[RMDB]
The record gives the reactivity of an RNA of 207 nucleotides to DMS and 2A3. The 2A3 profile rests on 906 reads. The reactions ran in a buffer of 150 mM KOAc, 10 mM MgCl2 and 150 mM bicine (pH 8.5), at 24 C. DMS adducts were read by reverse transcription with MarathonRT. Values cover nucleotides 27 to 156.
RNA sequence: GGGAACGACUCGAGUAGAGUCGAAAAGAGCUGGCUAGCGUGACAUUCCUACUAAGCAAUGAGCCUAGCAACCAGAAUCUCCCAGCCCCGGUAGCCAAGGAGCACAGGUGGUAGGCUAUAGAAGGAGAUUUAAUGCAACACAGCUGGGUUCAAUAUAGGACCUCAUAUUAUUCGUAAUAUGAGGUCCAAAAGAAACAACAACAACAAC
Reactivity to DMS in 0.01 (KOAc 150mM, MgCl2 10mM, bicine 150mM(pH8.5), 24C), signal-to-noise 2, nucleotides 027 to 156: g010a130g030c060u010g010g020c040u010a110g060c080g020u000g030a160c070a170u020u000c070c070u000a100c070u010a070a090g030c070a130a150u010g010a200g020c020c010u070a020g020c000a100a050c040c110a250g000a070a080u000c010u010c010c000c010a130g000c080c010c000c040g040g020u000a080g000c050c030a130a120g000g000a080g010c050a120c050a070g040g020u010g000g000u000a170g010g030c060u000a040u010a080g010a170a060g000g000a060g010a060u000u010u000a100a080u010g030c060a100a090c030a090c050a110g040c000u000g000g010g000u010u010c060a050a100u000a120u000a180
Reactivity to 2A3 in 0.01 (KOAc 150mM, MgCl2 10mM, bicine 150mM(pH8.5), 24C), signal-to-noise 1, nucleotides 027 to 156: g060a000g000c030u020g080g010c050u110a040g010c030g120u060g040a040c020a070u000u000c000c000u000a080c080u090a100a080g100c030a070a100u050g000a000g010c000c000u000a000g000c000a000a010c030c010a000g030a050a030u050c000u020c010c000c000a020g040c000c000c000c020g080g030u010a010g010c030c000a120a050g160g010a070g110c020a050c010a070g000g100u110g020g020u110a070g050g000c020u050a030u050a150g150a080a070g000g000a000g000a000u000u000u010a030a020u040g090c050a070a030c050a030c010a120g020c000u000g020g010g000u000u030c010a020a020u050a010u070a030